[RMDB]
RNA sequence: GGGAACGACUCGAGUAGAGUCGAAAACCAGCAUGGUUGGGUUUGCCGUAGCCCUGCCCAUUCCUGUAGAACUUGCCAGAUCAGCACUGAGACGGUUUGAGGCCUCCUGUUGUCCCUCCAGCAGAAGCUAAACAUACCAGUUCGCUGGUAUGUUUAGAAAAGAAACAACAACAACAAC
Reactivity to 2A3 in 0.01 (KOAc 150mM, MgCl2 10mM, bicine 150mM(pH8.5), 24C), signal-to-noise 3, nucleotides 027 to 126: c010c000a000g080c040a060u120g000g050u030u040g030g020g010u040u060u100g070c060c020g020u040a020g010c000c000c000u020g020c040c000c000a060u110u060c000c020u050g060u110a050g040a130a060c030u060u100g020c020c010a040g000a150u060c030a010g070c040a020c110u040g010a020g010a080c020g050g020u030u070u110g070a040g010g030c000c010u040c000c000u040g030u100u040g030u060c000c000c000u010c010c000a010g000c010a010g030a100a000g030
Reactivity to DMS in 0.01 (KOAc 150mM, MgCl2 10mM, bicine 150mM(pH8.5), 24C), signal-to-noise 5, nucleotides 027 to 126: c010c000a150g000c140a090u000g000g020u000u000g010g010g020u000u010u000g040c040c050g010u000a120g000c030c010c010u000g010c050c010c030a130u000u000c040c010u000g000u000a090g010a080a080c070u000u000g010c050c010a070g010a090u000c050a070g010c060a060c070u000g000a110g000a090c070g010g000u000u000u000g010a110g010g010c020c010u000c020c020u010g000u010u000g010u000c030c000c000u010c140c030a060g010c070a070g010a080a100g000